[RMDB]
RNA sequence: GGGAACGACUCGAGUAGAGUCGAAAAUUAAUGAAGCAAAUCUCCAAACGCCAACGAUGAGCGUUUCGCAAUCGCCGCUUAAGGAUUUUGCCGAGGCUGCUUGAGCCUUGUUACCAAAGAAAAGCCGAAAACCCAAAUGUCUUCGGACAUUUGGGAAUCAUAGUAUUACCUUCGGGUAAUACUAUGAAAAAGAAACAACAACAACAAC
Reactivity to 2A3 in 0.01 (KOAc 150mM, MgCl2 10mM, bicine 150mM(pH8.5), 24C), signal-to-noise 2, nucleotides 027 to 156: u210u120a030a090u160g090a090a000g010c010a030a040a070u050c060u020c120c030a060a060a010c030g020c000c020a110a050c070g060a100u090g070a130g090c040g030u060u140u260c080g000c010a040a050u020c010g040c100c010g030c070u110u100a080a060g010g000a050u060u050u000u090g000c020c040g000a000g000g000c040u100g000c010u130u040g000a000g000c000c010u020u000g030u040u150a030c000c020a000a020a020g010a020a020a010a000g000c000c030g040a040a060a080a110c000c000c010a000a000a000u000g000u000c000u030u070c150g080g000a000c000a000u000u000u000g000g000g030a000a000
Reactivity to DMS in 0.01 (KOAc 150mM, MgCl2 10mM, bicine 150mM(pH8.5), 24C), signal-to-noise 1, nucleotides 027 to 156: u000u020a070a090u010g000a080a090g010c010a000a010a020u000c010u000c000c030a030a070a000c010g010c010c000a120a040c000g010a050u000g010a210g020c000g030u010u000u020c040g040c060a090a040u000c000g000c040c040g000c020u000u000a070a110g010g000a040u000u020u020u000g060c010c010g040a210g000g030c020u010g010c010u010u010g030a100g010c010c020u010u000g020u000u000a290c060c020a060a090a170g000a120a100a070a060g020c050c110g020a030a040a050a200c000c030c010a000a030a030u000g010u010c010u000u010c300g040g010a000c020a000u000u010u000g010g010g000a000a000